[RMDB]
RNA sequence: GGGAACGACUCGAGUAGAGUCGAAAAGUGCAUUUUCAUCAUGGAAUUUUGCGAAAUCAAGAGUUGGGCAUGCCUUGCGUGCGUUCUUGUCAUACCGGAGUUACUGUUGCAGCAGAUGCCUUAGGAAGUCCAUAUUGGGUUUCGACCCAAUAUGGACAAAAGAAACAACAACAACAAC
Reactivity to 2A3 in 0.01 (KOAc 150mM, MgCl2 10mM, bicine 150mM(pH8.5), 24C), signal-to-noise 1, nucleotides 027 to 126: g070u050g010c000a070u060u030u000u050c020a080u040c050a020u080g130g030a090a160u000u090u160u130g100c090g070a070a000a090u100c070a110a100g020a010g130u120u120g090g080g050c030a040u040g000c000c090u100u140g000c050g020u040g070c000g070u000u020c010u080u030g080u050c020a060u060a090c050c000g040g000a010g020u040u130a090c040u060g070u080u030g080c070a100g000c020a010g040a100u080g010c000c050u040u030a030g010g100a130a000
Reactivity to DMS in 0.01 (KOAc 150mM, MgCl2 10mM, bicine 150mM(pH8.5), 24C), signal-to-noise 2, nucleotides 027 to 126: g010u000g020c030a040u000u000u000u000c030a110u020c110a080u020g010g000a020a060u010u000u000u020g030c030g000a110a100a070u010c060a040a080g000a080g020u010u010g010g010g000c030a040u010g000c030c160u010u010g010c050g020u000g010c050g000u010u010c010u010u000g040u000c130a070u010a120c170c040g000g010a070g010u010u010a080c040u000g010u010u010g010c100a050g010c070a030g010a110u000g010c010c020u010u010a090g010g000a090a130

The record gives the reactivity of an RNA of 177 nucleotides to 2A3 and DMS. DMS adducts were read by reverse transcription with MarathonRT. 2A3 adducts were read by reverse transcription with SuperScript II with manganese. Values cover nucleotides 27 to 126. The RNA was probed in 150 mM KOAc, 10 mM MgCl2 and 150 mM bicine (pH 8.5) at 24 C.